An RNA of 177 nucleotides, treated with DMS and 2A3 and read out base by base. Source: RMDB library M2PK50, as collected in RNAgym.

RNA sequence: GGGAACGACUCGAGUAGAGUCGAAAAUCCUCACGUUUCGACGUGAGGAGAACUCUAGCAAGGGAAGGGAUCCCUCGGGAAGGGCUCCCAAGGCGAUCUCAACAAGGGCCAAAUUCGUUUGGCCCAACACAAUAACGUGAUUCGUCACGUUAUUGUGAAAAGAAACAACAACAACAAC
Reactivity to DMS in 0.01 (KOAc 150mM, MgCl2 10mM, bicine 150mM(pH8.5), 24C), signal-to-noise 8, nucleotides 027 to 126: u000c000c000u000c000a010c000g020u000u000u010c180g020a030c000g020u000g000a010g000g000a000g000a060a100c030u000c020u010a110g010c140a100a100g000g010g020a160a150g000g010g000a020u000c000c000c000u000c040g010g000g010a050a180g010g000g020c140u000c000c000c000a020a010g010g010c120g000a020u000c000u000c020a100a110c210a090a100g010g000g000c000c000a010a010a040u000u010c180g010u000u000u000g000g000c000c000c010a000a050
Reactivity to 2A3 in 0.01 (KOAc 150mM, MgCl2 10mM, bicine 150mM(pH8.5), 24C), signal-to-noise 9, nucleotides 027 to 126: u000c000c000u000c000a000c000g010u010u070u120c230g130a020c000g000u000g000a010g010g000a010g000a020a030c010u020c040u080a050g110c090a120a080g150g040g080a090a140g060g010g000a020u000c000c010c000u000c020g030g010g030a060a070g230g130g030c070u000c010c000c010a000a000g000g010c060g010a020u000c010u020c020a010a090c040a060a120g000g000g000c000c000a010a010a020u090u080c180g060u030u010u010g000g000c000c000c000a010a000
The DMS profile rests on 16,363 reads. For 2A3, 37,104 sequencing reads were counted. Reactivities are given for positions 27 through 126.